[RMDB]
RNA sequence: GGGAACGACUCGAGUAGAGUCGAAAAGCAGCCGUAGCGAAAGCGAUUACUCGCACAGCAAUGGAGGAGUAACGUAAUAAAUGCGUUUAGUCAUCUGUGGCAGACCCGAAGCCACUCGAUCUAUACCUCUAGCAAUUUGUUUCGACAAAUUGCUAGAAAAAGAAACAACAACAACAAC
Reactivity to 2A3 in 0.01 (KOAc 150mM, MgCl2 10mM, bicine 150mM(pH8.5), 24C), signal-to-noise 4, nucleotides 027 to 126: g020c050a010g040c020c000g030u070a030g040c020g080a090a030a000g020c000g010a020u020u020a030c010u020c010g050c020a040c020a030g040c040a050a150u120g040g050a050g060g010a020g040u000a000a000c020g020u030a030a060u060a160a180a040u180g010c030g020u030u040u100a090g040u050c010a040u000c060u070g010u030g010g000c020a010g040a150c010c000c020g030a040a000g010c010c000a000c000u040c050g040a030u020c040u060a110u060a150c010c050
Reactivity to DMS in 0.01 (KOAc 150mM, MgCl2 10mM, bicine 150mM(pH8.5), 24C), signal-to-noise 5, nucleotides 027 to 126: g030c060a100g010c030c020g030u020a110g000c040g020a060a130a140g000c030g010a150u010u020a050c040u010c000g000c050a270c040a090g000c240a080a060u010g010g000a160g020g000a070g000u000a010a040c020g000u000a040a060u020a050a120a070u000g000c040g000u000u000u010a050g030u020c050a080u010c070u000g020u000g000g000c030a090g000a100c030c010c020g000a110a080g010c010c030a020c020u010c140g010a040u000c050u000a090u010a090c130c060